[RMDB]
RNA sequence: GGGAACGACUCGAGUAGAGUCGAAAAAUAAAUUAUUAUGCCUUACGCCUGGUUGACCAGACUUUAGAGGUCGCUGUUCUGAGCUUAACGUCUGUUUUAACUGAAACGCCGCAUUCUACACUACAACCAGUUCAUCGAGAUUCGUCUCGAUGAACUGAAAAGAAACAACAACAACAAC
Reactivity to DMS in 0.01 (KOAc 150mM, MgCl2 10mM, bicine 150mM(pH8.5), 24C), signal-to-noise 2, nucleotides 027 to 126: a030u040a080a030a140u060u030a100u010u000a070u020g000c000c020u000u000a080c140g010c010c000u000g000g000u000u010g000a120c150c030a080g020a110c130u000u070u040a200g000a120g010g000u000c020g000c010u010g000u000u010c020u030g030a030g010c010u020u010a050a130c050g000u000c040u000g000u000u000u010u020a040a070c080u000g000a130a060a100c150g000c090c020g010c030a080u020u000c020u020a080c000a070c130u010a070c110a060a040c120
Reactivity to 2A3 in 0.01 (KOAc 150mM, MgCl2 10mM, bicine 150mM(pH8.5), 24C), signal-to-noise 4, nucleotides 027 to 126: a020u120a020a050a010u200u110a080u100u120a070u150g020c000c000u040u090a070c040g000c000c010u040g020g010u030u060g030a060c000c020a020g020a050c030u130u070u140a110g040a020g040g000u030c000g000c020u030g040u090u020c030u040g030a040g050c010u060u040a060a030c050g040u000c010u020g040u010u060u030u050a040a030c040u030g070a020a030a010c040g030c070c020g040c030a030u020u020c030u060a040c010a030c060u090a050c020a080a060c070

An RNA of 177 nucleotides, treated with DMS and 2A3 and read out base by base. The reactions ran in a buffer of 150 mM KOAc, 10 mM MgCl2 and 150 mM bicine (pH 8.5), at 24 C. For 2A3 the reverse transcriptase was SuperScript II with manganese. For DMS the reverse transcriptase was MarathonRT.